The record gives the reactivity of an RNA of 177 nucleotides to 2A3 and DMS. The data come from the RNA Mapping Database (RMDB), library OK2TRN.
RNA sequence: GGGAACGACUCGAGUAGAGUCGAAAACGCAUUGCCCUUGUACGGAACGUGCGUCAGCUUGAUGCCCGUCAUCGACUUCAGCAGCUCGGCCGACAAGUGUUGCGGGGUACCGCUGCCGCCGGAAGCGAUUGCUCCAUACGUUCGCGUAUGGAGCAAUAAAAGAAACAACAACAACAAC
Reactivity to 2A3 in 0.01 (KOAc 150mM, MgCl2 10mM, bicine 150mM(pH8.5), 24C), signal-to-noise 3, nucleotides 027 to 126: c030g010c050a050u000u240g040c020c010c000u030u140g110u060a080c060g030g030a130a020c010g020u020g000c030g040u040c040a040g100c070u160u180g020a020u090g020c030c000c070g110u130c030a050u030c010g110a100c020u100u040c090a070g000c020a030g050c040u040c020g110g040c040c020g040a050c040a060a060g050u040g050u160u060g040c020g000g000g020g040u100a100c000c040g000c010u020g000c020c020g010c020c020g080g020a040a010g000c010g040
Reactivity to DMS in 0.01 (KOAc 150mM, MgCl2 10mM, bicine 150mM(pH8.5), 24C), signal-to-noise 3, nucleotides 027 to 126: c050g000c090a060u000u020g010c140c010c060u000u000g020u000a090c170g020g010a090a120c060g000u000g020c030g030u010c060a110g000c120u000u010g010a050u010g000c030c030c040g020u000c050a030u010c030g000a070c030u000u010c060a120g000c020a110g010c030u000c050g000g020c020c040g000a060c080a030a080g020u020g000u000u000g000c010g020g000g000g000u010a100c080c050g000c050u000g010c010c040g000c030c030g000g010a100a050g010c060g010